[RMDB]
RNA sequence: GGGAACGACUCGAGUAGAGUCGAAAAUUAUUCAGUUGGUGCUGGAUUUUUUGGAUGCUUUGAAGCAAAACGGAUUCACCGGCGAUACCGCGACCAAUUAUGCAGAUCGCCUAACCAUGGCGACGGACGUAGUAUGCACAUUCGUGUGCAUACUACGAAAAGAAACAACAACAACAAC
Reactivity to 2A3 in 0.01 (KOAc 150mM, MgCl2 10mM, bicine 150mM(pH8.5), 24C), signal-to-noise 3, nucleotides 027 to 126: u090u050a050u040u090c020a010g050u030u060g150g020u140g000c020u020g000g050a040u040u010u020u000u050u100g100g020a050u040g010c030u140u100u290g130a090a020g010c010a010a070a070a060c030g060g000a040u060u080c050a030c160c000g020g030c030g030a060u050a070c000c030g020c010g030a020c010c020a030a060u130u040a060u220g090c020a020g070a260u010c000g000c000c000u000a030a010c030c020a040u110g020g000c010g020a010c020g030g010a000
Reactivity to DMS in 0.01 (KOAc 150mM, MgCl2 10mM, bicine 150mM(pH8.5), 24C), signal-to-noise 4, nucleotides 027 to 126: u010u000a040u000u000c040a060g000u000u020g020g010u000g010c010u000g000g000a020u000u000u000u000u010u010g010g010a210u000g000c060u000u000u010g000a110a120g010c020a020a030a080a110c110g010g000a090u000u000c050a100c030c040g020g020c040g000a110u000a100c040c020g000c050g000a110c060c030a040a070u000u000a050u000g020c070a120g010a120u000c000g010c010c010u000a070a110c170c300a120u010g000g010c010g020a030c070g000g010a170